RNA sequence: GGGAACGACUCGAGUAGAGUCGAAAACGAUUGAGUCCAGGAGUUCUGGGCUGUAGUGCGCUAUGCCGAUCGGGUGUCCGCACUAAGUUCGGCAUCAAUAUGGUGACCUCCCGGGAGCGGGGGACCACCAGGUUGCCUAAGGAGGGGUGAACCGGCCGUAUCGUUUCAACUUCGGUUGAAACGAUACAAAAGAAACAACAACAACAAC
Reactivity to 2A3 in 0.01 (KOAc 150mM, MgCl2 10mM, bicine 150mM(pH8.5), 24C), signal-to-noise 3, nucleotides 027 to 156: c020g130a080u020u100g040a020g010u010c020c020a010g030g060a140g120u270u190c020u030g030g010g000c030u010g000u030a030g000u020g000c050g000c110u090a040u080g000c020c010g100a170u090c070g120g040g000u040g010u000c000c040g070c060a020c020u050a060a110g030u040u050c020g000g000c020a010u020c030a020a130u130a090u220g020g020u010g020a120c000c010u040c000c020c000g030g100g030a120g120c080g000g010g020g010g030a050c070c060a010c010c000a000g010g000u020u020g030c000c010u020a080a060g020g030a030g000g050g030g000u030g020a030a020c020c000g030g000c000c030